[RMDB]
RNA sequence: GGGAACGACUCGAGUAGAGUCGAAAAUGAGUCAUCCAUGUGUUCAUUGCAUCAAGGAAAUACUCAACAUAACUAUUAAUAGCGACCAUUGUUCUUGCUGCAUCACUAUUAUUAUCUGGCUCAGUAAGAGCACACUUAGAUUCGUCUAAGUGUGCUCAAAAGAAACAACAACAACAAC
Reactivity to 2A3 in 0.01 (KOAc 150mM, MgCl2 10mM, bicine 150mM(pH8.5), 24C), signal-to-noise 4, nucleotides 027 to 126: u050g000a010g010u010c010a020u060c100c050a130u120g020u010g010u080u180c090a090u060u140g010c000a010u030c020a050a020g010g060a050a050a020u120a050c060u040c120a030a000c000a040u210a080a040c030u160a070u300u130a200a130u040a100g050c020g040a030c040c060a050u030u080g140u110u030c020u010u020g010c000u000g000c010a010u000c000a020c010u060a040u220u050a090u110u100a060u120c060u020g000g000c000u000c010a010g060u070a140a010
Reactivity to DMS in 0.01 (KOAc 150mM, MgCl2 10mM, bicine 150mM(pH8.5), 24C), signal-to-noise 4, nucleotides 027 to 126: u000g000a020g010u010c080a110u010c080c100a110u010g030u000g000u010u010c260a100u010u010g020c010a030u000c020a060a070g000g000a020a030a080u000a080c160u010c030a100a170c130a060u020a100a090c110u000a130u000u010a090a110u000a050g010c150g000a070c220c060a110u010u000g020u000u000c040u000u000g010c070u000g010c040a040u010c040a020c040u000a050u000u010a030u000u000a090u030c160u010g000g000c020u000c010a080g000u010a070a080

The record gives the reactivity of an RNA of 177 nucleotides to 2A3 and DMS. The RNA was probed in 150 mM KOAc, 10 mM MgCl2 and 150 mM bicine (pH 8.5) at 24 C. The DMS profile rests on 2,297 reads. For DMS the reverse transcriptase was MarathonRT.